[RMDB]
RNA sequence: GGGAACGACUCGAGUAGAGUCGAAAACUCGCUCUCGCUGACGAUCUCGGCUCGCCAGCCCUGCCGUUCGGCGUAGCGGCUGUACAUGCGCUGCAGAUCACCGGCGAAGAUCGCCGCUUCCGCGCCGGCAGCGUGGAAGGUUCGCCUUCCACGCUGCAAAAGAAACAACAACAACAAC
Reactivity to 2A3 in 0.01 (KOAc 150mM, MgCl2 10mM, bicine 150mM(pH8.5), 24C), signal-to-noise 1, nucleotides 027 to 126: c000u000c030g000c000u060c010u000c010g010c070u000g020a000c040g000a030u020c030u010c020g000g000c010u000c020g000c000c000a000g000c000c010c010u030g000c050c000g170u300u300c230g080g000c070g050u060a070g000c160g060g000c000u050g060u110a060c030a160u150g060c030g000c010u000g000c110a000g010a080u020c010a030c060c000g000g000c030g000a020a010g020a050u020c050g000c030c030g000c050u140u000c020c010g070c040g000c020c050g080
Reactivity to DMS in 0.01 (KOAc 150mM, MgCl2 10mM, bicine 150mM(pH8.5), 24C), signal-to-noise 1, nucleotides 027 to 126: c030u000c050g000c070u010c060u000c000g030c000u000g050a050c060g000a050u000c030u000c070g020g020c030u000c100g000c160c060a040g010c020c000c000u000g000c080c000g010u010u000c190g020g050c050g030u000a050g030c160g020g000c020u000g000u000a100c170a190u000g000c120g000c000u010g000c120a040g000a000u000c030a060c080c010g000g010c000g000a030a090g000a060u010c080g000c040c000g030c070u000u000c050c080g020c060g020c050c030g020
The data come from the RNA Mapping Database (RMDB), library OK2TRN. An RNA of 177 nucleotides, treated with 2A3 and DMS and read out base by base. For DMS the reverse transcriptase was MarathonRT. The 2A3 profile rests on 1,405 reads.